[RMDB]
RNA sequence: GGGAACGACUCGAGUAGAGUCGAAAAGAUAUGGAGUUCUUGGAUUUAAAAUGCAAUUGGGAACUCGUACGGUGUCGGAAACGACAUUACGUUGCCCAAUUGCAUUUUUGUCAGAACUCCUAAGUCACAGAGUAAAUAUCUUCGGAUAUUUACUCUGAAAAGAAACAACAACAACAAC
Reactivity to DMS in 0.01 (KOAc 150mM, MgCl2 10mM, bicine 150mM(pH8.5), 24C), signal-to-noise 5, nucleotides 027 to 126: g000a070u000a300u010g000g000a020g000u000u010c000u010u020g030g010a010u000u000u000a010a000a000a000u000g000c010a010a010u000u010g000g000g000a090a140c220u010c120g020u020a020c300g020g020u000g000u000c000g000g000a120a100a280c010g010a020c000a010u010u000a040c030g020u010u010g000c000c000c000a010a010u000u000g010c000a000u000u000u000u000u000g000u010c020a040g000a020a010c000u010c000c000u000a020a070g010u000c050a300
Reactivity to 2A3 in 0.01 (KOAc 150mM, MgCl2 10mM, bicine 150mM(pH8.5), 24C), signal-to-noise 2, nucleotides 027 to 126: g030a020u070a080u190g000g000a040g000u040u020c090u300u220g270g030a070u300u300u270a020a020a000a000u010g000c010a000a020u000u020g000g010g020a150a200c090u020c170g010u010a030c140g050g060u000g000u010c010g000g020a120a060a020c010g000a010c000a000u070u060a020c070g100u060u140g200c000c000c000a000a000u020u000g000c000a000u000u000u000u000u000g000u020c010a010g000a000a000c000u000c010c000u010a070a020g020u020c030a020